An RNA of 207 nucleotides, treated with DMS and 2A3 and read out base by base.
Conditions: 150 mM KOAc, 10 mM MgCl2 and 150 mM bicine (pH 8.5), 24 C.
For 2A3, 1,139 sequencing reads were counted.
Source: RMDB library OK3TST, as collected in RNAgym.
Reactivities are given for positions 27 through 156.

RNA sequence: GGGAACGACUCGAGUAGAGUCGAAAAUCUAAUCUUGCUGGACUCCUUUAAGCUUUGGGGAGAACAGAUCUUUGGUUGGUAUGAGUUCGUAAACCGUACAGUUCCUGAGGUUACCGCCAAUGGAACUCGCUACGUGAAGAAGCGAAUCAAGAAACGAUCAGCAAACAAGAUUCGUCUUGUUUGCUGAAAAAGAAACAACAACAACAAC
Reactivity to DMS in 0.01 (KOAc 150mM, MgCl2 10mM, bicine 150mM(pH8.5), 24C), signal-to-noise 2, nucleotides 027 to 156: u010c030u030a080a040u020c040u000u000g060c010u000g020g000a300c020u000c020c020u000u000u010a050a150g010c140u000u000u020g020g010g040g070a030g020a040a300c000a020g010a040u000c000u000u000u000g020g000u010u010g060g010u010a160u010g000a160g000u000u000c020g060u000a060a170a050c040c010g000u030a020c020a030g040u000u000c020c000u010g000a300g010g000u010u000a150c300c300g030c010c010a030a300u000g020g020a010a020c000u000c160g010c080u010a050c020g070u010g060a150a110g010a080a200g020c000g010a040a040u000c010a050a130g020a090a090a100c080g020a190
Reactivity to 2A3 in 0.01 (KOAc 150mM, MgCl2 10mM, bicine 150mM(pH8.5), 24C), signal-to-noise 2, nucleotides 027 to 156: u000c010u060a010a020u030c090u060u180g020c000u030g020g030a060c000u050c030c000u100u090u190a170a110g070c000u100u240u180g040g000g000g020a020g000a040a020c010a020g050a050u000c060u060u200u160g090g000u030u020g030g000u100a050u070g140a160g100u000u010c020g000u020a060a060a040c020c010g000u000a000c000a010g000u000u000c000c000u010g000a020g080g000u090u180a150c060c110g000c000c000a000a000u000g010g000a000a000c000u000c010g000c070u010a010c020g050u160g100a140a040g070a100a000g010c030g020a020a020u080c010a040a030g040a070a050a030c070g010a060